[RMDB]
RNA sequence: GGGAACGACUCGAGUAGAGUCGAAAAGCGUACUACGUACAGAUAAGGAGCUUGGAUUUAUAGCCUACCAUCGUUGGGAGGUAGGUGUCCCAAAUAGGACACCUAUAAUCUCCCAACGAUGGUAGGCUAUUGUCAGCUCCGAAACUGUACGUAUCGCCAAUCUCUCUAUCUUCGGAUAGAGAGAUUGAAAAGAAACAACAACAACAAC
Reactivity to DMS in 0.01 (KOAc 150mM, MgCl2 10mM, bicine 150mM(pH8.5), 24C), signal-to-noise 1, nucleotides 027 to 156: g010c020g020u010a060c050u000a010c020g070u020a030c010a040g010a070u010a170a300g010g000a000g020c020u010u020g040g020a020u000u010u000a000u000a030g010c000c000u000a040c010c000a000u000c020g040u000u010g000g070g030a020g160g020u000a000g040g050u000g000u000c000c000c000a050a170a270u020a050g030g010a030c000a040c020c000u000a010u020a140a160u010c000u020c000c000c000a000a000c010g000a000u000g000g000u000a000g010g010c000u000a000u000u000g000u000c000a110g000c000u000c000c020g010a010a130a090c000u000g000u000a000c020g000u020a000u000c020g030c020
The record gives the reactivity of an RNA of 207 nucleotides to DMS. For DMS the reverse transcriptase was MarathonRT. The data come from the RNA Mapping Database (RMDB), library RNAMAK.